[RMDB]
Notes: Chemical mapping of a 207-nucleotide RNA with 2A3 and DMS.
RNA sequence: GGGAACGACUCGAGUAGAGUCGAAAAAGCGAGCUGAGGGUCCUAGGGCCUCAUUAAAAACGUAGGAAAAAAAAGAUAACUGCCAAACCUAAAUUGGCCGUAGCAGCUUAAUUGUUGCUCGUCGACUAUCGGGGUUCCCACCUCGGAUAGUAUCGGCCUGAAUACUCUACUUCGGUAGAGUAUUCAGAAAAGAAACAACAACAACAAC
Reactivity to 2A3 in 0.01 (KOAc 150mM, MgCl2 10mM, bicine 150mM(pH8.5), 24C), signal-to-noise 1, nucleotides 027 to 156: a000g110c060g030a000g030c030u030g000a010g010g000g010u080c000c020u040a050g010g000g060c020c020u000c060a140u080u130a010a010a010a010a000c080g010u000a040g000g000a060a140a080a050a040a040a040a070g090a050u140a100a010c010u020g000c000c010a070a130a140c040c070u120a110a150a180u060u010g010g000c000c020g030u020a020g020c020a000g000c030u100u120a090a020u200u070g000u030u000g010c040u000c040g020u010c000g020a000c010u000a000u010c000g000g020g010g010u050u070c020c000c020a040c000c000u000c000g130g050a010u000a000g000u010a130u010c000g000g000c020
Reactivity to DMS in 0.01 (KOAc 150mM, MgCl2 10mM, bicine 150mM(pH8.5), 24C), signal-to-noise 1, nucleotides 027 to 156: a110g040c060g000a100g040c070u000g000a060g000g050g010u010c000c040u000a130g050g020g000c000c030u000c010a030u010u010a040a090a040a160a080c060g040u000a060g020g060a000a010a000a160a080a060a100a200g010a190u000a030a030c010u000g050c020c010a110a110a020c040c010u000a060a030a220u010u000g020g010c000c070g070u000a060g000c010a020g010c000u010u020a110a110u000u000g010u000u000g000c000u000c110g020u000c040g040a030c000u000a020u000c020g000g010g020g010u030u000c150c060c050a300c060c000u000c040g000g020a040u010a010g040u000a100u000c050g030g040c080
Background: For 2A3, 772 sequencing reads were counted.